[RMDB]
RNA sequence: GGGAACGACUCGAGUAGAGUCGAAAAGAUAUGGACAUAGGCAACAGCAUGUGGAUCGGAAACGAUCCCAUGACAUGCCUGGGUCCUAAGUCAAAGGGUAUACGUAACUUCGGUUACGUAUACCCAAGGUACCAGGAAAGUUCGCUUUCCUGGUACCAAAAGAAACAACAACAACAAC
Reactivity to DMS in 0.01 (KOAc 150mM, MgCl2 10mM, bicine 150mM(pH8.5), 24C), signal-to-noise 3, nucleotides 027 to 126: g000a010u000a240u010g000g000a000c010a050u000a010g020g000c010a040a110c300a230g000c010a000u010g040u010g000g000a010u000c000g020g000a060a030a150c000g000a000u000c000c000c000a000u000g000a080c140a140u000g000c000c000u000g000g000g000u000c000c000u000a000a090g000u000c020a120a110a160g000g020g010u000a000u000a010c010g020u010a000a010c000u000u010c180g010g010u010u000a000c000g010u000a000u000a000c000c000c000a000a000
Reactivity to 2A3 in 0.01 (KOAc 150mM, MgCl2 10mM, bicine 150mM(pH8.5), 24C), signal-to-noise 2, nucleotides 027 to 126: g010a000u020a010u060g000g000a010c020a020u030a020g010g000c010a060a050c060a300g160c000a040u070g130u300g030g000a000u010c000g000g030a010a000a030c000g000a000u010c010c020c000a010u010g000a040c010a020u010g010c000c010u010g020g000g000u000c000c000u010a020a020g030u030c070a090a100a050g020g020g020u030a010u010a000c010g010u000a000a010c000u070u100c300g000g000u010u000a000c000g000u000a000u000a000c000c010c000a000a000

Chemical mapping of a 177-nucleotide RNA with DMS and 2A3. For DMS, 2,340 sequencing reads were counted. For 2A3, 3,956 sequencing reads were counted. For 2A3 the reverse transcriptase was SuperScript II with manganese. The reactions ran in a buffer of 150 mM KOAc, 10 mM MgCl2 and 150 mM bicine (pH 8.5), at 24 C.